[RMDB]
RNA sequence: GGGAACGACUCGAGUAGAGUCGAAAAUCACGACUACUAUGUACGUGUCAUCACUGAAGCAUCGGCUCGUCGUGAAUCUCCACCAAUUGUCGUUUUGACAAUUGACACGACUUUCUCUGGAGAUAUAGUUUUACUCCCUCUUCGGAGGGAGUAAAACAAAAGAAACAACAACAACAAC
Reactivity to DMS in 0.01 (KOAc 150mM, MgCl2 10mM, bicine 150mM(pH8.5), 24C), signal-to-noise 3, nucleotides 027 to 126: u000c010a040c010g010a030c030u000a140c060u010a000u020g000u000a120c130g010u000g030u010c220a140u010c030a040c030u010g000a130a150g010c040a030u000c110g030g000c040u000c290g020u010c000g020u000g040a040a050u000c000u020c010c000a190c200c010a020a020u000u000g020u000c000g030u010u010u030u010g020a000c000a000a000u000u000g000a110c090a070c150g020a040c070u000u000u000c010u000c040u000g000g000a040g000a030u020a130u000a080
Reactivity to 2A3 in 0.01 (KOAc 150mM, MgCl2 10mM, bicine 150mM(pH8.5), 24C), signal-to-noise 2, nucleotides 027 to 126: u020c000a000c000g010a010c000u070a050c010u020a100u070g010u040a050c060g010u020g140u190c100a130u210c000a030c030u070g040a170a020g010c010a020u070c060g190g000c130u030c070g000u010c010g000u000g020a040a040u010c010u030c010c010a030c030c000a000a000u010u000g030u020c090g140u120u100u240u300g000a000c000a000a000u010u000g010a020c020a010c060g170a050c040u030u030u000c040u000c030u060g020g000a010g000a000u030a030u030a070